[RMDB]
RNA sequence: GGGAACGACUCGAGUAGAGUCGAAAAUAUUACACCUGGUAUACAGAGAAGAAGGAAAGAUAGGCACACGGCAACGCUGCGCAACCAAAUUACACGGGCUACACUAUAUGGCCACAGGCACAGUCAAGUGGUUCAACGACGCUAAAGGUUUCGGAUUCAUCACUCCAGACGAAGGCGGUGAGGACCUGUUCGCUCACUUCUCGGCCAUUAACGUUCAGGGGUUUAAGACACUCAAGGAAGGACAGAAGGUGUCGUUCGACGUUAUAAGACGUAAGUUCGCUUACGUCAAAAGAAACAACAACAACAAC
Reactivity to 2A3 in 0.01 (KOAc 150mM, MgCl2 10mM, bicine 150mM(pH8.5), 24C), signal-to-noise 2, nucleotides 027 to 266: u120a030u070u220a040c040a020c050c010u040g070g010u110a130u060a160c080a030g060a030g010a130a000g060a020a050g070g020a060a110a030g030a040u110a070g020g000c050a040c030a010c070g060g020c040a050a040c010g000c020u050g020c010g020c030a020a030c030c020a080a100a100u210u160a060c070a010c060g000g010g020c010u040a010c020a020c060u080a060u020a040u300g020g010c000c000a030c000a070g040g000c030a020c020a040g020u060c010a080a070g060u030g090g010u070u080c040a040a030c050g050a010c030g000c040u100a080a040a140g040g030u030u090u080c040g010g050a060u080u060c010a010u080c020a030c050u000c000c010a000g020a020c030g020a040a030g040g010c010g020g010u020g030a040g000g020a050c040c030u080g090u090u060c030g050c070u010c000a020c010u080u060c120u060c090g040g020c000c000a020u080u080a080a020c020g030u060u040c020a030g030g010g030g010u000u080u100a050a020g030a010c040a000c080u050c020a010a020g060g020a050a000g050g030a060c030a040g060a040a030g060g020u040g020u010c010g000u010u040c020g050a040c040g040u080u060a090u060a260a060
Reactivity to DMS in 0.01 (KOAc 150mM, MgCl2 10mM, bicine 150mM(pH8.5), 24C), signal-to-noise 5, nucleotides 027 to 266: u010a080u010u010a140c110a180c040c020u000g020g010u000a080u010a120c130a150g010a130g000a070a050g010a090a070g010g010a060a060a070g000a050u010a050g010g020c130a090c110a090c130g000g020c060a090a090c100g020c050u000g020c070g000c110a070a100c100c090a080a100a100u020u020a060c170a090c090g010g010g010c020u000a060c100a070c100u010a060u000a070u000g000g000c010c040a080c100a060g010g010c040a060c110a090g010u010c080a060a080g010u000g000g010u000u000c070a070a070c070g000a060c080g020c050u010a040a090a080g000g000u000u000u000c050g010g000a120u000u000c090a040u010c060a050c070u010c020c030a090g010a050c070g010a090a120g010g030c040g000g010u000g010a030g000g000a060c070c110u010g030u010u000c050g000c050u010c050a050c030u010u010c110u000c100g010g010c020c020a050u010u000a060a100c090g010u010u010c030a060g000g010g000g000u010u010u010a050a070g010a060c120a030c070u010c060a040a080g000g000a060a040g010g000a050c120a030g020a090a080g000g000u000g000u000c020g020u000u000c030g000a050c110g000u010u020a070u010a070a170
This 307-nucleotide RNA was probed chemically with 2A3 and DMS.
The reactions ran in a buffer of 150 mM KOAc, 10 mM MgCl2 and 150 mM bicine (pH 8.5), at 24 C.
2A3 adducts were read by reverse transcription with SuperScript II with manganese.
For 2A3, 3,794 sequencing reads were counted.
Values cover nucleotides 27 to 266.
It was measured as part of the RMDB library POS240.